The record gives the reactivity of an RNA of 177 nucleotides to 2A3 and DMS. The 2A3 profile rests on 11,302 reads. Conditions: 150 mM KOAc, 10 mM MgCl2 and 150 mM bicine (pH 8.5), 24 C. Source: RMDB library M2PK50, as collected in RNAgym. The DMS profile rests on 8,511 reads. For 2A3 the reverse transcriptase was SuperScript II with manganese. Reactivities are rounded to 0.1 and cut off at 0 and 3.

[RMDB]
RNA sequence: GGGAACGACUCGAGUAGAGUCGAAAACUGUGCAUGUUCGCAUGCACAGAAAUGCGUCACAGGCGAUUGACGCAAUAAUUAUGAUGGUAGGAUCGCCUGUGUAAAGCGGGUCCUUCGGGACCCGCAACCCAUUUAUACGAUUCGUCGUAUAAAUGGGAAAAGAAACAACAACAACAAC
Reactivity to 2A3 in 0.01 (KOAc 150mM, MgCl2 10mM, bicine 150mM(pH8.5), 24C), signal-to-noise 6, nucleotides 027 to 126: c000u000g000u010g000c000a010u000g010u050u080c190g020c120a000u010g010c000a000c010a000g000a000a000a010u170g020c060g140u090c010a010c000a010g000g000c010g020a010u010u050g090a060c040g040c100a010a040u140a040a010u190u280a110u210g190a050u100g050g100u080a060g100g080a010u010c000g000c000c000u000g010u000g010u020a050a070a000g010c000g020g000g000u000c010c000u030u070c160g020g010g000a000c000c000c000g000c000a000a000
Reactivity to DMS in 0.01 (KOAc 150mM, MgCl2 10mM, bicine 150mM(pH8.5), 24C), signal-to-noise 4, nucleotides 027 to 126: c010u000g000u000g010c010a010u000g000u000u010c200g030c000a000u000g000c000a010c010a010g000a030a070a060u020g010c180g010u000c000a000c010a020g010g010c020g020a010u000u000g010a120c090g000c020a040a020u010a090a110u010u010a090u010g010a080u010g010g010u010a050g000g000a010u000c010g000c000c010u000g010u010g010u010a030a070a100g010c010g010g000g000u000c000c000u000u020c180g010g010g000a010c000c000c000g010c000a000a020